[RMDB]
Structure probing data (2A3 and DMS) for a 177-nucleotide construct. 2A3 adducts were read by reverse transcription with SuperScript II with manganese. For DMS the reverse transcriptase was MarathonRT. The 2A3 profile rests on 1,646 reads.
RNA sequence: GGGAACGACUCGAGUAGAGUCGAAAAAGGCAUUUACGCUUGGGGCGGAGUAUUGCAGUCUGGUCGCCGCCGUAAGCGGGACGCGCGUGGUCUGCGUCGGCGACCGCGAUCAAUGCGGCCCGCACUCCGGUGGGACAGGAUUCGUCCUGUCCCACCGAAAAGAAACAACAACAACAAC
Reactivity to 2A3 in 0.01 (KOAc 150mM, MgCl2 10mM, bicine 150mM(pH8.5), 24C), signal-to-noise 3, nucleotides 027 to 126: a000g110g000c040a050u070u070u200a100c130g000c030u060u040g030g010g000g030c030g000g010a080g070u070a070u140u120g070c030a010g020u000c030u050g060g000u020c030g010c070c010g020c050c020g130u010a080a000g030c030g000g000g020a080c040g000c000g030c010g180u020g030g000u040c100u280g000c010g060u180c070g110g000c020g000a000c000c000g000c000g010a000u030c000a080a100u150g000c000g000g040c000c000c000g010c000a070c010u050c040
Reactivity to DMS in 0.01 (KOAc 150mM, MgCl2 10mM, bicine 150mM(pH8.5), 24C), signal-to-noise 1, nucleotides 027 to 126: a120g000g010c010a090u020u020u020a150c190g000c000u030u000g010g000g000g030c000g050g000a130g020u050a140u070u020g030c090a170g030u020c040u000g000g040u000c000g040c010c000g100c090c030g000u020a100a040g000c000g040g000g000a050c020g000c030g020c010g000u000g000g010u000c000u010g040c000g000u000c300g010g000c000g000a020c040c000g020c020g020a090u000c050a100a100u040g000c000g000g010c080c000c000g010c060a080c050u000c090